[RMDB]
RNA sequence: GGGAACGACUCGAGUAGAGUCGAAAAGGGGUCGUCACUAGUACGCAUGUUGUCAGCGAUGACGGUCUGAAGCCUCCACGGACCGUUCAUCGCUUGGAUUUACAUGCGGACCGUGACGACGGAGGCACCCAAAGUAGGUGCGUUCGCGCACCUACAAGACUCUUGUGAUCUUCGGAUCACAAGAGUCAAAAGAAACAACAACAACAAC
Reactivity to 2A3 in 0.01 (KOAc 150mM, MgCl2 10mM, bicine 150mM(pH8.5), 24C), signal-to-noise 1, nucleotides 027 to 156: g140g010g020g000u010c000g020u020c000a000c020u040a040g050u020a000c010g000c020a000u000g010u010u020g060u040c030a000g000c000g000a000u000g010a000c000g000g000u010c000u030g030a040a000g030c010c040u070c020c010a020c030g000g000a000c010c000g070u210u130c000a000u030c000g010c000u000u050g000g000a010u110u240u000a000c000a030u000g000c020g030g000a000c000c000g000u000g000a000c000g000a000c000g000g000a000g020g020c000a040c000c000c000a070a030a020g040u010a010g000g010u000g020c020g030u050u040c280g010c000g000c080a010c000c010u000a000c000a000a000